Source information:
The data come from the RNA Mapping Database (RMDB), library M2RFPK. Structure probing data (2A3 and DMS) for a 207-nucleotide construct. The RNA was probed in 150 mM KOAc, 10 mM MgCl2 and 150 mM bicine (pH 8.5) at 24 C.
[RMDB]
RNA sequence: GGGAACGACUCGAGUAGAGUCGAAAAAGAUGGCAGGUUCACCCCGUACGGUGCGGAAGUUCGCGCUUCCGUGAAACGCGAAAAUCGGACGGUGGCUGCAAGUCGCAUCGCAAAACCGCGGCAAGCGUUAACCUGGACCUCUUCGGAGGUCCAGGAAUACUAUGCUAAAGUUCGCUUUAGCAUAGUAAAAAGAAACAACAACAACAAC
Reactivity to 2A3 in 0.01 (KOAc 150mM, MgCl2 10mM, bicine 150mM(pH8.5), 24C), signal-to-noise 3, nucleotides 027 to 156: a000g090a060u100g060g010c020a010g030g040u180u140c000a040c020c000c010c000g000u020a020c050g020g050u040g010c000g000g030a010a020g010u080u240c080g010c030g000c070u000u000c000c000g030u030g030a080a090a000c100g000c040g090a070a050a000a110u080c000g000g030a040c090g030g020u030g020g010c030u030g000c020a010a020g030u020c000g000c030a050u040c030g000c090a070a060a050a070c060c060g000c000g050g010c110a120a020g000c060g050u080u110a030a030c000c010u000g000g010a010c020c000u030c020u050u010c080g080g000a010g000g000u000c000c000a000g010g000a000a000
Reactivity to DMS in 0.01 (KOAc 150mM, MgCl2 10mM, bicine 150mM(pH8.5), 24C), signal-to-noise 2, nucleotides 027 to 156: a110g010a060u000g030g020c050a110g000g000u000u000c080a130c000c010c000c010g030u000a060c020g010g000u020g050c020g020g000a070a070g020u000u000c230g040c300g000c010u000u000c010c060g000u000g010a030a120a050c040g000c050g000a090a040a130a070u000c020g010g000a020c030g000g010u010g000g020c030u020g020c010a050a170g020u000c080g040c020a120u020c040g000c050a050a110a120a160c040c040g040c030g000g030c040a100a160g010c050g010u000u000a050a140c000c020u030g000g000a040c000c000u000c010u000u000c290g070g000a050g040g020u000c000c000a010g000g020a010a010